[RMDB]
RNA sequence: GGGAACGACUCGAGUAGAGUCGAAAACUGUGCUGACCUUCAUUUGAAUGGAAUGUUUGUGCACCCCACCUUGGUCUGGGAAUAAUUGGGUUCCCUGCCUUGCCAUCAUAGAAGGGUUGUCCCUUCUGUGACCGCUGCAUUGAGGGUUACAAAAUAAUAAUUACGUAGGAUUCGUCCUACGUAAUUAAAAAGAAACAACAACAACAAC
Reactivity to 2A3 in 0.01 (KOAc 150mM, MgCl2 10mM, bicine 150mM(pH8.5), 24C), signal-to-noise 7, nucleotides 027 to 156: c040u040g010u030g050c020u040g030a040c010c010u030u030c020a100u090u180u300g220a190a100u180g030g040a070a050u080g030u050u080u080g040u050g010c020a030c020c000c010c000a040c020c010u040u080g020g020u130c140u030g010g000g060a020a030u080a080a140u150u140g200g050g010u020u010c000c000c000u010g040c000c000u000u010g020c000c020a020u020c000a000u020a030g000a000a010g070g050g040u230u230g160u290c000c000c000u000u000c000u000g010u000g000a010c050c080g070c090u120g000c010a050u070u080g050a080g030g010g010u040u040a050c060a020a160a020a010u300a060a020
Reactivity to DMS in 0.01 (KOAc 150mM, MgCl2 10mM, bicine 150mM(pH8.5), 24C), signal-to-noise 4, nucleotides 027 to 156: c060u010g010u000g020c030u000g020a090c020c020u000u000c030a160u000u000u010g000a150a100u000g020g010a060a050u000g010u000u000u000g020u000g020c030a070c020c000c010c020a060c070c050u000u000g020g020u000c120u000g030g010g010a070a030u000a050a140u000u010g020g020g020u000u000c000c000c000u000g010c020c030u000u000g010c030c060a130u000c010a030u000a020g010a030a010g010g010g020u010u010g020u000c020c000c000u000u000c000u000g030u000g000a030c050c130g030c060u000g020c050a100u000u010g010a080g010g020g010u000u010a130c060a040a040a080a080u010a080a190